[RMDB]
RNA sequence: GGGAACGACUCGAGUAGAGUCGAAAAAGACAUACAGCUACCAGAAUGGCUAAAAUUGAAAAGAAUAACAGCAUCAAGUCUUGGUUAUAUCUACAGCAGCUGUAACUCUCCUACAUUGCUGGGGGUAUCGGUUUUACCUAUUCGUAGGUAAAACCGAAAAAGAAACAACAACAACAAC
Reactivity to DMS in 0.01 (KOAc 150mM, MgCl2 10mM, bicine 150mM(pH8.5), 24C), signal-to-noise 1, nucleotides 027 to 126: a050g030a160c080a110u030a030c110a060g000c000u010a090c050c100a120g000a070a140u000g000g040c030u000a000a070a070a020u000u000g020a010a060a160a140g010a080a080u010a060a080c160a080g000c060a080u000c060a030a090g000u000c030u010u010g000g010u000u000a030u000a040u000c060u000a080c070a070g010c080a020g010c080u000g010u020a000a040c060u000c080u000c030c010u000a030c120a050u040u000g080c080u000g030g000g000g000g000u000a100
Reactivity to 2A3 in 0.01 (KOAc 150mM, MgCl2 10mM, bicine 150mM(pH8.5), 24C), signal-to-noise 1, nucleotides 027 to 126: a000g030a020c000a060u070a030c020a030g000c010u030a040c000c040a030g050a120a080u020g020g000c070u060a040a020a040a030u090u120g000a220a000a040a040g060a060a000u120a130a050c000a010g090c000a020u060c060a080a050g120u040c020u050u070g010g020u010u050a090u020a060u060c000u010a050c020a020g000c030a000g020c050u000g030u020a020a010c020u030c010u030c030c000u030a040c020a150u100u260g030c100u100g020g000g010g020g060u110a120